[RMDB]
RNA sequence: GGGAACGACUCGAGUAGAGUCGAAAAAUGCCUGGCGUUACAAGUCCAUUCAAUUUGUUGUGCUCAACACAACUACACUAGCUUUUGUCAACGGUAAGUGCACUUAUUAUGCUAAUGAGCCAUUCUUCACUUUUGAGGGUGGUGAUCAUUACAUUAAACGUCAAGAAGGAUUCGUCCUUCUUGACGUAAAAGAAACAACAACAACAAC
Reactivity to 2A3 in 0.01 (KOAc 150mM, MgCl2 10mM, bicine 150mM(pH8.5), 24C), signal-to-noise 5, nucleotides 027 to 156: a000u070g030c010c000u030g050g070c020g040u050u030a040c050a070a010g060u020c060c050a110u130u240c080a080a170u110u050u200g010u000u010g010u020g030c100u110c200a000a150c010a020c000a010a010c010u080a040c070a040c070u120a060g060c020u050u130u110u100g030u130c090a050a020c050g030g030u080a120a040g040u100g160c010a010c070u050u060a070u160u070a020u150g090c100u000a020a000u010g000a000g010c000c010a030u110u000c030u090u080c030a130c160u150u250u240u300g010a010g010g000g000u000g000g010u020g050a020u010c000a000u010u020a000c000a000u070u150a120a240
Reactivity to DMS in 0.01 (KOAc 150mM, MgCl2 10mM, bicine 150mM(pH8.5), 24C), signal-to-noise 2, nucleotides 027 to 156: a060u000g010c000c060u000g060g010c040g010u000u010a110c070a060a120g070u000c030c020a120u000u010c090a060a170u000u020u010g010u010u000g030u000g020c050u030c190a110a190c070a000c040a080a100c020u000a040c070a100c020u000a110g000c030u000u000u000u000g010u000c090a080a050c130g000g030u010a070a040g000u000g000c020a040c090u000u000a140u010u000a040u000g000c080u000a010a010u000g030a030g020c010c010a070u010u000c010u000u000c040a100c260u000u000u000u000g020a030g030g010g010u020g030g020u000g010a120u010c020a000u000u000a020c020a030u000u000a050a130
The record gives the reactivity of an RNA of 207 nucleotides to 2A3 and DMS. Conditions: 150 mM KOAc, 10 mM MgCl2 and 150 mM bicine (pH 8.5), 24 C. As a SHAPE reagent, 2A3 marks flexible, mostly unpaired nucleotides at the ribose 2'-OH. The data come from the RNA Mapping Database (RMDB), library OK3TST.